RNA sequence: GGGAACGACUCGAGUAGAGUCGAAAAUAGACGAGAGAUAUAGCAAUCGUCAUACCCAUAUCACUCUAUGUGACGAUUGGUGAACGCUAUCAUAGAGUGAGUGGGUAGCGUUCACACACCUUCUCGAGAUUGUAAGGAGAUUCGUCUCUUUGCAAUCAAAAGAAACAACAACAACAAC
Reactivity to 2A3 in 0.01 (KOAc 150mM, MgCl2 10mM, bicine 150mM(pH8.5), 24C), signal-to-noise 9, nucleotides 027 to 126: u130a010g050a010c010g000a000g000a000g020a030u030a010u080a150g080c020a010a030u000c000g000u000c000a000u030a020c000c000c000a000u020a020u020c010a010c010u020c010u020a020u060g010u010g020a010c010g030a050u030u090g070g010u040g040a030a000c010g000c000u010a000u000c000a020u050a020g070a000g050u070g010a000g040u030g030g000g000u000a000g000c000g000u000u010c000a000c000a000c000a000c000c000u010u000c000u000c000g000a000
Reactivity to DMS in 0.01 (KOAc 150mM, MgCl2 10mM, bicine 150mM(pH8.5), 24C), signal-to-noise 7, nucleotides 027 to 126: u020a090g000a140c030g000a020g010a120g000a140u040a090u040a170g010c030a040a080u000c000g000u000c000a080u010a050c050c040c020a070u020a030u010c030a010c030u000c020u000a060u010g010u000g010a030c030g010a070u010u010g010g010u010g010a060a020c010g000c010u000a030u020c010a030u020a070g010a050g010u000g000a070g010u010g000g010g020u000a000g000c000g000u000u000c000a000c010a000c020a010c010c010u000u000c000u000c000g000a040